[RMDB]
RNA sequence: GGGAACGACUCGAGUAGAGUCGAAAAGGGUAGGUGUUCGCACCUACCCAAAUAACGCCGUAGCGCCGAUGGUAGUGUGGGGUCUCCCCUUGCGAGAGUAGGAAAGGUGGGUCUUCGGACCCACCAACCAUGGCCAAUGGUUCGCCAUUGGCCAUGGAAAAGAAACAACAACAACAAC
Reactivity to DMS in 0.01 (KOAc 150mM, MgCl2 10mM, bicine 150mM(pH8.5), 24C), signal-to-noise 2, nucleotides 027 to 126: g000g000g020u000a000g020g020u000g000u010u020c180g030c020a020c020c000u000a000c000c000c020a020a010a030u000a080a110c160g010c040c060g010u000a090g000c070g000c010c030g010a070u020g010g010u000a070g040u000g000u010g030g010g000g000u010c120u000c010c010c000c040u000u010g010c030g000a140g000a090g010u000a080g020g010a100a120a090g000g020u000g020g000g040u010c010u000u000c170g020g000a020c000c000c000a030c000c000a010a070
Annotation: The data come from the RNA Mapping Database (RMDB), library M2PK50. This 177-nucleotide RNA was probed chemically with DMS.